Record summary
An RNA of 177 nucleotides, treated with 2A3 and DMS and read out base by base. It was measured as part of the RMDB libraries RFM100 and RFMREP. For DMS the reverse transcriptase was MarathonRT. The RNA was probed in 150 mM KOAc, 10 mM MgCl2 and 150 mM bicine (pH 8.5) at 24 C.
[RMDB]
RNA sequence: GGGAACGACUCGAGUAGAGUCGAAAAGCCAACCCCAUCAAACCGAACCGGAUCCAGCAGAUCCUGCGCCGUUACUUCAAGCGGAUCCUGCCCAGGCCGCUGACCCUGAUCGAGGAUCCCAUGAGCCCAUUAUAGGUAGGUUCGCCUACCUAUAAUGAAAAGAAACAACAACAACAAC
Reactivity to 2A3 in 0.01 (KOAc 150mM, MgCl2 10mM, bicine 150mM(pH8.5), 24C), signal-to-noise 9, nucleotides 027 to 126: g050c010c020a030a070c020c010c010c010a040u100c050a060a080a050c030c010g040a020a020c020c020g020g010a020u040c020c020a020g040c010a010g060a090u040c010c020u050g010c020g010c020c020g060u080u090a080c030u090u090c060a090a030g010c030g070g010a060u060c000c000u030g030c000c020c000a010g010g020c010c020g040c050u050g020a060c000c000c010u020g020a050u060c040g050a030g030g010a030u020c000c000c010a040u090g030a020g030c010c020
Reactivity to DMS in 0.01 (KOAc 150mM, MgCl2 10mM, bicine 150mM(pH8.5), 24C), signal-to-noise 9, nucleotides 027 to 126: g010c040c040a090a160c050c020c010c020a090u030c110a040a090a090c080c030g000a070a070c080c080g000g010a050u010c040c040a080g020c070a090g010a080u010c030c030u000g010c060g010c040c030g010u010u010a070c090u010u010c090a070a050g010c040g010g010a080u010c030c010u010g000c090c040c040a120g000g010c040c040g020c030u010g000a060c080c020c000u000g010a070u010c050g000a100g010g000a070u000c000c000c020a090u020g000a090g010c090c070